[RMDB]
RNA sequence: GGGAACGACUCGAGUAGAGUCGAAAAUCGAGGCGGGUCGUCGUGCUCAUCCUGCGAGCAAUAGUUGGCAAAUUAGGUCAGUCUGCACCGCUCACUGUUGCAGCUGCGACACGAACCGCCUGUCGUGGGCGGAUCGGAGGUUCGCCUCCGGUCCGCCAAAAGAAACAACAACAACAAC
Reactivity to 2A3 in 0.01 (KOAc 150mM, MgCl2 10mM, bicine 150mM(pH8.5), 24C), signal-to-noise 5, nucleotides 027 to 126: u140c000g010a020g010g040c010g000g020g010u110c060g060u000c000g000u030g020c070u050c050a160u180c060c060u060g040c010g060a190g050c030a000a000u020a000g010u020u020g030g000c050a070a140a270u260u080a200g000g050u040c030a020g130u080c140u210g060c130a030c000c070g000c020u060c020a020c010u030g000u010u010g000c010a000g000c010u070g020c070g020a010c000a000c010g000a020a030c000c000g010c000c000u020g020u020c040g050u120g060
Reactivity to DMS in 0.01 (KOAc 150mM, MgCl2 10mM, bicine 150mM(pH8.5), 24C), signal-to-noise 2, nucleotides 027 to 126: u020c050g000a010g030g020c000g010g000g050u000c150g000u000c020g020u000g010c110u000c010a090u000c090c050u010g000c090g010a010g000c000a000a010u020a020g010u000u010g000g030c010a080a090a090u000u080a180g000g000u000c000a130g030u010c180u000g020c080a030c070c060g030c000u030c190a060c000u010g000u010u000g020c040a260g000c000u010g010c120g000a020c070a010c030g000a020a070c000c000g000c000c000u010g000u020c050g030u040g000